[RMDB]
RNA sequence: GGGAACGACUCGAGUAGAGUCGAAAAACAGCUUGGCGGUGUCCACGCCGCGGUCUUGCAGUCCCCGCAGCUCAUUGAGCAGGACACCGGGAUCGAUCACCACGCCGUUGCCGAUAACGUUGGUGACACCCUAAGUCUGGUUCGCCAGACUUAGGGUAAAAGAAACAACAACAACAAC
Reactivity to DMS in 0.01 (KOAc 150mM, MgCl2 10mM, bicine 150mM(pH8.5), 24C), signal-to-noise 2, nucleotides 027 to 126: a060c100a020g000c070u010u010g020g020c010g010g010u000g000u010c060c090a080c110g000c100c040g000c110g000g000u000c060u020u040g000c000a040g000u010c050c090c020c070g060c070a060g050c000u000c080a120u020u000g030a170g010c000a180g000g000a060c060a050c040c020g040g000g000a080u000c040g000a140u020c040a040c000c000a010c050g000c080c020g000u050u000g000c000c000g000a100u010a100a220c010g040u000u000g000g030u000g000a070c180
Reactivity to 2A3 in 0.01 (KOAc 150mM, MgCl2 10mM, bicine 150mM(pH8.5), 24C), signal-to-noise 4, nucleotides 027 to 126: a020c070a040g070c090u090u230g080g010c020g000g040u010g000u030c040c010a120c070g020c010c030g020c030g020g010u050c090u050u260g020c030a070g080u160c000c010c020c020g000c030a070g000c020u020c040a280u090u300g020a040g010c040a040g000g000a010c000a000c040c020g040g040g010a130u110c060g050a090u030c000a000c010c000a030c020g110c030c000g070u060u040g040c010c030g020a030u120a230a050c050g070u060u060g000g000u000g030a020c000
Structure probing data (DMS and 2A3) for a 177-nucleotide construct.
Values cover nucleotides 27 to 126.
For 2A3 the reverse transcriptase was SuperScript II with manganese.
Source: RMDB library OK1LIB, as collected in RNAgym.
The RNA was probed in 150 mM KOAc, 10 mM MgCl2 and 150 mM bicine (pH 8.5) at 24 C.
For DMS the reverse transcriptase was MarathonRT.